[RMDB]
RNA sequence: GGGAACGACUCGAGUAGAGUCGAAAAGAAUUGCAACGAAUCUUGAUGUCCAGGGAUGUGAGUGUCCCGAGGAUUCCAUAGAUAUGGAGAUAAUGCGACACCAGUUGGGUUCCUUUAUUCCUUGAGGUGAGGCUAUAGGAUUCGUCCUAUAGCCUCAAAAAGAAACAACAACAACAAC
Reactivity to 2A3 in 0.01 (KOAc 150mM, MgCl2 10mM, bicine 150mM(pH8.5), 24C), signal-to-noise 1, nucleotides 027 to 126: g000a020a000u090u120g160c010a010a030c070g050a010a060u050c010u060u120g040a050u040g020u000c010c000a040g020g000g010a000u020g080u160g160a140g090u220g000u000c000c000c010g010a070g000g000a010u020u000c030c000a010u040a100g140a060u120a030u060g060g000a030g010a050u040a050a070u100g050c080g020a000c020a030c000c020a050g000u050u010g020g010g000u000u060c000c000u080u140u060a090u090u000c000c000u030u060g140a050g000g100
Reactivity to DMS in 0.01 (KOAc 150mM, MgCl2 10mM, bicine 150mM(pH8.5), 24C), signal-to-noise 4, nucleotides 027 to 126: g010a030a030u000u000g000c040a040a020c080g030a130a070u000c080u010u010g010a100u010g020u000c020c020a300g000g000g000a020u000g010u010g020a180g020u020g010u000c000c010c010g000a080g030g000a080u010u010c020c020a040u000a110g010a150u010a070u010g010g000a050g000a100u020a070a130u000g000c090g000a040c060a040c050c020a080g010u000u000g000g000g000u000u000c020c030u000u000u000a160u020u010c020c010u000u000g020a090g020g000